[RMDB]
This 207-nucleotide RNA was probed chemically with 2A3. Conditions: 150 mM KOAc, 10 mM MgCl2 and 150 mM bicine (pH 8.5), 24 C.
RNA sequence: GGGAACGACUCGAGUAGAGUCGAAAAGUUGAGAGCGUUUAACUUAAGUCUUUUUUAUUACCUUAAAAAAACUAUAUACAAGUGGUGGUAGUCCGCCACUCUAAGGGGACGCCUUUAGAAGAAGAGGGAAAGGCACUAAGCUUCGGCUUAGUGCCAACUUAAGAUUGCACUUCGGUGCAAUCUUAAGAAAAGAAACAACAACAACAAC
Reactivity to 2A3 in 0.01 (KOAc 150mM, MgCl2 10mM, bicine 150mM(pH8.5), 24C), signal-to-noise 1, nucleotides 027 to 156: g080u080u090g040a040g010a030g030c070g020u000u000u120a110a110c010u050u050a120a050g000u030c060u040u170u030u060u040u120a210u070u230a210c000c030u120u160a110a050a000a010a000a050a050c250u300a300u060a030u010a290c030a080a050g000u000g010g010u000g010g060u070a060g140u050c000c000g030c030c010a000c000u000c010u000a000a030g000g000g000g030a040c100g020c000c030u000u060u080a060g000a120a000g030a010a000g030a060g000g020g020a120a000a130g030g000c000a000c000u010a000a000g020c000u020u150c300g020g000c000u000u010a000g000u000g020c020c010a000a000